[RMDB]
RNA sequence: GGGAACGACUCGAGUAGAGUCGAAAAGAUCCGCCAUGGAUCGAGUGAUCGUACCUAUAGCGCUAGCGCUGUGACUCCAUGCAUGACGAGCUCCAUGGUCAUGCUGGUACUCAUGUGCCAUGAGCCAAGCCAGAUUAUGCUUCGGCAUAAUCUGGCUAAAAGAAACAACAACAACAAC
Reactivity to 2A3 in 0.01 (KOAc 150mM, MgCl2 10mM, bicine 150mM(pH8.5), 24C), signal-to-noise 2, nucleotides 027 to 126: g010a050u000c010c010g090c180c100a180u300g000g030a050u030c080g000a010g000u140g020a110u120c040g050u090a100c000c050u150a100u120a130g040c100g070c070u030a050g070c030g030c090u040g020u030g080a030c010u020c030c010a090u260g000c000a000u020g030a000c040g020a030g080c030u000c060c070a160u070g040g000u010c010a000u000g060c050u020g000g010u010a010c010u040c020a010u040g080u130g090c010c000a060u170g050a010g070c030c060a030
Reactivity to DMS in 0.01 (KOAc 150mM, MgCl2 10mM, bicine 150mM(pH8.5), 24C), signal-to-noise 2, nucleotides 027 to 126: g010a080u000c010c020g030c110c170a120u000g020g010a010u000c070g020a070g010u000g020a060u000c060g000u000a080c030c010u000a070u010a050g010c040g020c080u000a060g020c070g020c020u030g040u010g000a030c090u000c000c030a050u010g010c010a020u000g000a020c010g010a160g010c050u010c090c150a110u000g000g000u000c010a000u000g010c020u000g010g010u010a070c170u000c020a040u000g000u010g000c010c050a050u000g000a050g000c010c160a130